[RMDB]
RNA sequence: GGGAACGACUCGAGUAGAGUCGAAAAGAUAUGGACCGCCGAAGCAAGGUCUAAGCAAGCGAUGAAAUUUAUCGGAAACGAUAAAUGGAGCUUGAACGCGACUGAUGACCUUCGGCGGUCCUAAGUCCAAUUGAAACGUCUUCGGACGUUUCAAUUGAAAAGAAACAACAACAACAAC
Reactivity to DMS in 0.01 (KOAc 150mM, MgCl2 10mM, bicine 150mM(pH8.5), 24C), signal-to-noise 1, nucleotides 027 to 126: g000a060u000a230u000g000g010a040c000c000g010c000c020g010a010a010g020c060a130a110g000g000u000c000u010a200a070g000c010a030a000g010c000g000a160u020g000a060a130a010u000u000u010a000u000c000g000g020a060a080a110c030g000a020u000a000a000a010u010g000g020a020g010c010u000u000g000a040a060c220g020c230g000a010c020u020g000a040u040g020a070c300c010u010u000c000g040g000c010g010g000u000c000c010u000a000a120g000u000c030
Conditions: 150 mM KOAc, 10 mM MgCl2 and 150 mM bicine (pH 8.5), 24 C. Structure probing data (DMS) for a 177-nucleotide construct. For DMS the reverse transcriptase was MarathonRT. For DMS, 1,081 sequencing reads were counted. Source: RMDB library TTRINS, as collected in RNAgym.